[RMDB]
RNA sequence: GGGAACGACUCGAGUAGAGUCGAAAAUUAUACCGACAGCACGGGUGGUCACGAUCUGAACAUGCGUCUCUCCCAACAGCGUGCGGAUUCCGUUGCCAGCGCGUUGAUCACCCAGGGCGUGGACGCACCCACCAUUUUAUUUCGAUAAAAUGGUGGGAAAAGAAACAACAACAACAAC
Reactivity to 2A3 in 0.01 (KOAc 150mM, MgCl2 10mM, bicine 150mM(pH8.5), 24C), signal-to-noise 5, nucleotides 027 to 126: u060u010a060u080a110c020c020g040a050c040a040g010c030a020c040g020g000g000u040g000g010u030c030a010c060g020a090u040c040u080g060a110a040c020a080u080g000c020g030u000c020u000c010u000c040c020c000a060a100c020a050g030c010g040u050g010c040g010g020a060u180u040c050c060g060u110u140g040c020c000a040g000c020g000c010g030u030u060g010a060u060c020a030c040c000c000a010g020g000g000c050g030u080g040g010a030c030g000c030a040
Reactivity to DMS in 0.01 (KOAc 150mM, MgCl2 10mM, bicine 150mM(pH8.5), 24C), signal-to-noise 7, nucleotides 027 to 126: u010u010a130u000a160c080c020g010a140c100a090g020c050a100c080g010g020g020u000g010g000u000c040a070c070g000a040u010c060u010g000a080a110c140a080u000g010c030g000u010c030u000c070u000c010c010c020a130a120c080a060g010c040g020u000g010c050g010g000a080u000u010c100c060g010u000u000g010c050c030a100g020c060g000c030g000u000u010g010a060u000c060a050c030c030c030a140g010g010g010c050g000u000g000g000a090c090g020c140a130